An RNA of 207 nucleotides, treated with 2A3 and DMS and read out base by base. In probing experiments dimethyl sulfate is read out at A N1 and C N3, which are open when not base-paired. Conditions: 150 mM KOAc, 10 mM MgCl2 and 150 mM bicine (pH 8.5), 24 C. For 2A3 the reverse transcriptase was SuperScript II with manganese. DMS adducts were read by reverse transcription with MarathonRT. For DMS, 10,243 sequencing reads were counted. The data come from the RNA Mapping Database (RMDB), library OK3TST.
[RMDB]
RNA sequence: GGGAACGACUCGAGUAGAGUCGAAAAAAUCGAGCAUUGGGUGGGGGAUCCGACUGCUCUAAAUGCAAUCUGUUUGCACAAUACCGACCUGAACCCAUACCCAUAUUAUGGUCUACCUAUGCCUAAGCAUUUCUACCUUUUCAGCAUUUUCACGCUAGUAAUGAUCAUUAUUCGUAAUGAUCAUUACAAAAGAAACAACAACAACAAC
Reactivity to 2A3 in 0.01 (KOAc 150mM, MgCl2 10mM, bicine 150mM(pH8.5), 24C), signal-to-noise 9, nucleotides 027 to 156: a010a000u140c060g000a020g010c040a060u060u080g020g010g000u050g020g010g010g010g010a020u030c020c030g050a040c080u060g000c000u010c010u040a070a090a020u040g000c010a010a050u050c080u150g130u130u050u030g020c020a020c020a090a070u080a150c040c050g030a040c010c030u040g070a050a050c010c010c010a010u070a040c020c020c020a030u060a070u180u070a060u120g020g010u000c030u030a050c000c010u030a030u120g020c010c010u060a090a040g020c030a050u040u090u050c030u050a080c020c000u060u050u050u100c030a010g000c010a050u030u030u090u140c120a100c090g020c040u020a020
Reactivity to DMS in 0.01 (KOAc 150mM, MgCl2 10mM, bicine 150mM(pH8.5), 24C), signal-to-noise 3, nucleotides 027 to 156: a070a080u000c040g000a120g050c030a080u000u010g000g010g040u010g010g000g040g030g010a080u010c040c030g000a090c080u000g020c050u000c040u010a040a070a070u000g020c030a040a040u010c120u000g010u000u000u010g040c040a050c030a090a100u000a080c030c020g020a090c030c030u000g010a180a120c040c020c010a100u000a090c060c010c030a090u000a120u000u000a080u000g030g020u000c030u000a070c030c000u000a070u000g010c020c020u000a070a100g010c050a070u010u000u000c040u000a070c020c020u000u000u000u000c050a090g010c040a150u000u000u000u000c020a100c030g000c060u000a140